This 177-nucleotide RNA was probed chemically with 2A3 and DMS. Conditions: 150 mM KOAc, 10 mM MgCl2 and 150 mM bicine (pH 8.5), 24 C. The 2A3 profile rests on 1,579 reads.
RNA sequence: GGGAACGACUCGAGUAGAGUCGAAAAAAAAGAUAUGGAUGUCGGGUACAGACAUGCUGCACCGUGAUCGGAAACGAUCGGUUUAGCAGCAACAGCUGUAUCUCUAGCGUGCAUCCUAAGUCAAAAACAUCUUUCAGAUCUUCGGAUCUGAAAGAUGAAAAGAAACAACAACAACAAC
Reactivity to 2A3 in 0.01 (KOAc 150mM, MgCl2 10mM, bicine 150mM(pH8.5), 24C), signal-to-noise 1, nucleotides 027 to 126: a040a050a030a000g030a020u110a070u200g000g000a000u000g030u020c050g060g040g000u000a000c000a040g100a020c030a080u110g000c000u010g020c000a000c010c050g280u180g120a030u010c000g020g000a080a140a040c050g020a030u130c040g000g020u140u230u200a050g000c000a000g000c010a060a010c080a020g100c010u010g000u120a010u010c110u000c020u090a170g220c110g300u300g010c000a000u010c000c020u020a110a080g100u070c010a000a000a000a000a210
Reactivity to DMS in 0.01 (KOAc 150mM, MgCl2 10mM, bicine 150mM(pH8.5), 24C), signal-to-noise 2, nucleotides 027 to 126: a050a000a150a000g000a050u020a300u000g000g010a020u010g050u010c050g010g040g020u000a000c000a000g020a070c070a270u010g040c000u000g000c000a060c040c020g000u020g040a000u000c020g000g020a150a040a190c000g000a010u000c000g000g010u000u000u010a190g020c000a000g010c000a010a040c300a140g000c040u000g020u000a000u000c010u040c160u020a130g040c280g000u010g030c000a010u000c000c010u020a050a240g010u000c030a050a040a060a070a150